Chemical mapping of a 177-nucleotide RNA with DMS and 2A3. The reactions ran in a buffer of 150 mM KOAc, 10 mM MgCl2 and 150 mM bicine (pH 8.5), at 24 C.

RNA sequence: GGGAACGACUCGAGUAGAGUCGAAAAGAGGCUGUCUGCCUCCACCCCCAUGUGGCUGGGUGAUAGUGGCUCAGGCAUCAUGCAACAUGAACUCUGGGGCUCUGUAGGUUCUUGGAGGCCAUGGAGCGAUGCUACCAAGAUUCGUCUUGGUAGCAUCAAAAGAAACAACAACAACAAC
Reactivity to DMS in 0.01 (KOAc 150mM, MgCl2 10mM, bicine 150mM(pH8.5), 24C), signal-to-noise 4, nucleotides 027 to 126: g000a020g010g010c010u020g000u010c200u000g020c020c010u000c000c070a160c100c020c010c050c050a080u000g020u000g020g000c040u000g010g010g010u000g010a190u000a100g030u000g010g020c040u000c020a040g010g010c030a020u010c070a050u010g010c080a080a190c030a030u000g000a050a100c040u000c010u000g010g000g000g000c010u010c110u010g000u010a120g010g000u000u010c020u000u000g030g010a050g000g010c090c000a000u000g000g010a210g020c110
Reactivity to 2A3 in 0.01 (KOAc 150mM, MgCl2 10mM, bicine 150mM(pH8.5), 24C), signal-to-noise 2, nucleotides 027 to 126: g000a000g010g000c040u070g120u300c150u180g050c010c010u030c000c010a040c000c030c000c010c010a030u090g030u050g090g100c010u020g000g020g030u070g070a090u120a140g250u190g150g000c010u010c030a010g050g000c000a020u070c010a040u180g030c030a070a030c000a060u030g020a050a020c000u010c000u040g020g030g030g000c010u010c050u160g230u210a100g000g080u160u130c000u090u160g040g000a010g010g000c030c000a010u030g030g000a020g040c080
Values cover nucleotides 27 to 126.